[RMDB]
RNA sequence: GGGAACGACUCGAGUAGAGUCGAAAAUAGCGACGAGUCUGAGUAAGGACGAACUUGCCUUUGUCGAGCAACUGGUUGAUUGCAAAGCAGUCGUUGCCGCUGUUAACACCCAGCGGGCGCUUGAUGACAUGCCGGAUGUGUUCGCACAUCCGGCAUGAAAAGAAACAACAACAACAAC
Reactivity to DMS in 0.01 (KOAc 150mM, MgCl2 10mM, bicine 150mM(pH8.5), 24C), signal-to-noise 1, nucleotides 027 to 126: u020a110g020c030g000a060c050g010a190g000u000c000u010g010a150g030u050a080a120g020g040a080c030g020a070a190c150u000u000g050c100c030u010u000u030g000u020c080g010a180g020c000a030a050c070u000g010g020u000u000g000a170u000u000g000c040a040a060a050g000c070a000g010u000c020g020u000u000g010c000c050g000c020u000g000u000u000a070a100c140a100c180c260c020a060g000c080g010g000g030c100g020c040u000u000g040a120u000g000a160